[RMDB]
RNA sequence: GGGAACGACUCGAGUAGAGUCGAAAAAUUCGCUUUUUCUUCCUUUCUUCUACCCACUGUUCGAGGAUCUCCUCUCUCUCCUUCGAGGACGGGUUCGCGACGGGUUGGCUCAUCCUGAGACCGGGGAGCUUCGAUGAUCUCUCUAUUCUCUUGAAAGGUCAUGUUAAGUCUUCGGACUUAACAUGACAAAAGAAACAACAACAACAAC
Reactivity to 2A3 in 0.01 (KOAc 150mM, MgCl2 10mM, bicine 150mM(pH8.5), 24C), signal-to-noise 2, nucleotides 027 to 156: a000u180u160c110g010c060u150u080u030u010u030c030u050u020c010c000u040u110u040c030u080u000c030u060a110c000c010c030a070c060u110g070u160u030c010g010a000g020g020a080u040c010u020c010c020u000c010u040c010u000c010u090c030c110u170u250c160g030a010g050g000a000c040g050g000g000u020u030c050g030c010g060a100c060g090g000g000u050u100g030g000c000u000c040a110u040c030c020u030g030a020g020a040c040c020g010g000g020g020a010g000c000u080u080c080g180a190u120g090a070u050c030u000c000u000c000u080a090u130u020c030u000c000u070u040g050a110a060a020g040
Structure probing data (2A3) for a 207-nucleotide construct. For 2A3 the reverse transcriptase was SuperScript II with manganese. Source: RMDB library VIROID, as collected in RNAgym.